[RMDB]
RNA sequence: GGGAACGACUCGAGUAGAGUCGAAAAACAAGAGUGAAAUGACCCCUCCCCUCCAUUCAUAUGUGAAGAAUUCCCAGAAACAAUGCAGAGGGCAAAAGGAAUUGGCACUGAUGGUGGUACAUGGAUGGUAUCAUAUGCUUUUCGAAGCAUAUGAUACAAAAGAAACAACAACAACAAC
Reactivity to DMS in 0.01 (KOAc 150mM, MgCl2 10mM, bicine 150mM(pH8.5), 24C), signal-to-noise 9, nucleotides 027 to 126: a090c070a080a070g010a080g030u010g000a080a060a070u010g010a250c050c010c000c010u000c010c000c000c010u000c010c020a070u000u000c050a070u010a090u010g010u010g010a070a080g000a060a140u000u000c000c010c010a150g000a140a070a060c100a050a040u010g010c050a040g010a110g010g000g000c050a020a030a070a060g010g010a060a080u000u010g010g010c030a050c040u000g010a070u000g010g020u010g010g010u000a030c100a050u010g000g010a070u010g010
Reactivity to 2A3 in 0.01 (KOAc 150mM, MgCl2 10mM, bicine 150mM(pH8.5), 24C), signal-to-noise 5, nucleotides 027 to 126: a000c070a020a050g090a030g110u120g100a090a160a240u270g150a200c000c000c010c020u020c010c000c000c000u000c010c000a010u020u030c020a000u080a060u180g070u040g060a040a090g030a070a060u040u020c000c010c000a010g080a040a060a010c020a030a040u070g020c020a010g060a080g090g040g020c010a020a040a010a030g050g010a060a040u060u050g040g010c020a000c040u050g020a050u070g040g010u030g010g020u040a050c040a080u040g090g010a030u080g110
Overview
Chemical mapping of a 177-nucleotide RNA with DMS and 2A3. The RNA was probed in 150 mM KOAc, 10 mM MgCl2 and 150 mM bicine (pH 8.5) at 24 C. The DMS profile rests on 15,383 reads.